[RMDB]
RNA sequence: GGGAACGACUCGAGUAGAGUCGAAAAAAGAACUUCGGUUCUUCCUCUUCCUAAGUCUAAGGGAGCGAUGUGAACUGCGAAGAACUAUUCGGAAACGAAUAGGGAGCAGUUCCAUCGCGACGAUCUUAGAUAUGGAUAAACCUCUAUUCGUAGAGAAUAACCGAUGUUUCUUCGGAAACAUCGGUUAAAAAGAAACAACAACAACAAC
Reactivity to 2A3 in 0.01 (KOAc 150mM, MgCl2 10mM, bicine 150mM(pH8.5), 24C), signal-to-noise 1, nucleotides 027 to 156: a000a000g040a040a020c110u160u200c300g070g010u000u000c000u000u020c010c010u110c070u110u000c020c000u120a220a040g020u010c000u010a000a010g000g000g000a000g000c000g000a000u000g220u050g060a000a000c000u000g060c050g200a300a040g010a110a010c000u000a010u000u000c000g030g000a040a090a070c010g000a000a000u000a020g000g010g000a010g000c000a000g000u000u000c000c000a000u000c010g000c000g000a000c000g000a000u000c000u000u020a010g000a010u010a030u050g000g000a000u070a070a150a060c000c020u020c010u050a040u050u090c230g080u160a110g010a000g060a160a120